[RMDB]
RNA sequence: GGGAACGACUCGAGUAGAGUCGAAAACGAUAAGCUUGGGCGAGGAGCAUACAUCUUUGGAACCCAAGAUUGCCUAAUGGGACUUCCUAGCACAUUUUUUUUGUGUUGAUCCGUGUAGGAUUGGGAACGAUUGGAAUCGUUUCGACGAUUCCAAUCGAAAAGAAACAACAACAACAAC
Reactivity to 2A3 in 0.01 (KOAc 150mM, MgCl2 10mM, bicine 150mM(pH8.5), 24C), signal-to-noise 3, nucleotides 027 to 126: c040g030a050u060a140a040g040c000u000u000g000g020g000c020g030a020g000g030a020g020c050a050u120a170c070a190u070c020u050u010u060g090g030a050a070c000c010c000a030a000g040a040u040u150g050c010c020u100a130a090u150g020g000g070a050c040u030u020c000c020u030a010g000c010a020c010a070u030u020u000u000u020u010u150u090g020u010g010u010u070g030a040u000c010c010g060u090g190u300a040g020g040a050u030u050g040g000g010a110a030
Reactivity to DMS in 0.01 (KOAc 150mM, MgCl2 10mM, bicine 150mM(pH8.5), 24C), signal-to-noise 4, nucleotides 027 to 126: c120g000a060u010a050a060g000c030u000u010g000g020g000c060g020a300g000g000a030g010c190a170u080a110c260a080u020c020u000u010u000g000g020a180a180c000c000c000a030a000g000a060u010u040g010c040c010u010a060a040u010g000g000g040a120c100u000u000c020c010u010a040g000c010a010c010a000u000u010u010u030u050u000u010u000g020u010g020u020u010g000a030u010c020c000g020u040g010u020a140g010g010a050u000u010g000g010g000a050a130